[RMDB]
RNA sequence: GGGAACGACUCGAGUAGAGUCGAAAAGAUAUGGAGGUAUCUACCUAGUAUGCACGACGAUAAGCGAUAGUCGGAAACGACUAUUCGCUUUUGACGUCGGCAUACUAGGUAGAUACCUCCUAAGUCACUUGUCUACAUAGUUCGCUAUGUAGACAAGAAAAGAAACAACAACAACAAC
Reactivity to DMS in 0.01 (KOAc 150mM, MgCl2 10mM, bicine 150mM(pH8.5), 24C), signal-to-noise 3, nucleotides 027 to 126: g010a050u000a300u000g000g010a030g020g010u000a000u010c010u000a010c000c010u010a010g010u000a000u000g000c000a180c020g010a020c000g020a190u000a010a010g010c000g010a020u000a000g010u000c000g000g000a110a120a250c000g010a010c000u000a010u010u010c000g010c000u000u000u000u010g010a190c080g010u000c000g000g000c010a000u000a000c000u000a000g000g000u000a010g000a000u000a000c000c000u000c000c000u000a000a070g010u000c040a280
An RNA of 177 nucleotides, treated with DMS and read out base by base. The reactions ran in a buffer of 150 mM KOAc, 10 mM MgCl2 and 150 mM bicine (pH 8.5), at 24 C. Source: RMDB library TTRINS, as collected in RNAgym. DMS (dimethyl sulfate) methylates the pairing face of unpaired adenines and cytosines.